[RMDB]
RNA sequence: GGGAACGACUCGAGUAGAGUCGAAAAGCCCAGCCCUGUCGCCCCCCGGAGGUGAUCCCUCCCUCCUGCCGGCCCGCCAGCCUGACCUGUGCUUGGCUCCGCGGGCCGCAGCCUCGGCCCCGGCGCGCUAAGUAUUUUUGUUCGCAAAAAUACUUAGAAAAGAAACAACAACAACAAC
Reactivity to DMS in 0.01 (KOAc 150mM, MgCl2 10mM, bicine 150mM(pH8.5), 24C), signal-to-noise 2, nucleotides 027 to 126: g020c000c010c010a130g020c040c020c010u010g010u010c040g020c020c010c030c040c030c060g000g000a040g010g020u010g010a120u010c040c030c000u000c040c010c040u000c050c020u000g000c070c040g010g020c010c010c010g000c020c240a040g000c010c020u000g020a050c050c150u010g010u010g010c070u010u010g010g010c010u000c100c180g000c020g030g000g000c000c010g000c020a040g010c050c030u000c030g010g020c010c010c010c030g020g000c070g000c090g000
Chemical mapping of a 177-nucleotide RNA with DMS. For DMS the reverse transcriptase was MarathonRT. Reactivities are given for positions 27 through 126. The data come from the RNA Mapping Database (RMDB), library RFMREP. The DMS profile rests on 3,560 reads.